Source: RMDB library OK1LIB, as collected in RNAgym. An RNA of 177 nucleotides, treated with 2A3 and DMS and read out base by base. Reactivities are given for positions 27 through 126. The 2A3 profile rests on 31,332 reads. As a SHAPE reagent, 2A3 marks flexible, mostly unpaired nucleotides at the ribose 2'-OH. DMS adducts were read by reverse transcription with MarathonRT.

RNA sequence: GGGAACGACUCGAGUAGAGUCGAAAAAUAGAGGUUACGGACUCGGGGGCAGUACCCGACGCCUCCACCAAAACUUUCUAAAUAACUUGCUCCUAAAGGUAAUUUGUACGUCGAUCCGGUACUCGAACAGCUGUCUAGCGUUCGCGUUAGAUAGCUGAAAAGAAACAACAACAACAAC
Reactivity to 2A3 in 0.01 (KOAc 150mM, MgCl2 10mM, bicine 150mM(pH8.5), 24C), signal-to-noise 9, nucleotides 027 to 126: a000u120a010g020a010g010g030u050u050a030c060g000g040a050c060u070c130g000g000g000g000g000c020a030g040u090a110c010c010c010g010a010c020g010c000c000u030c000c010a040c010c000a020a100a040a040c030u180u300u070c050u090a040a060a080u160a050a050c040u040u100g030c010u030c030c020u070a110a060a030g060g020u060a100a170u080u130u190g050u060a040c040g030u010c030g030a040u010c020c010g030g030u030a030c020u010c050g040a100a040
Reactivity to DMS in 0.01 (KOAc 150mM, MgCl2 10mM, bicine 150mM(pH8.5), 24C), signal-to-noise 9, nucleotides 027 to 126: a130u020a030g000a030g020g010u000u000a070c300g000g010a110c160u030c170g000g010g000g000g010c020a100g010u010a100c040c010c020g010a160c090g000c010c000u000c010c020a080c040c030a050a220a050a030c020u010u020u010c030u010a040a070a090u030a070a130c080u010u020g000c040u000c000c010u000a050a070a080g010g000u010a050a080u020u020u020g000u010a040c060g010u010c030g000a070u010c030c010g000g000u010a030c040u010c030g010a060a180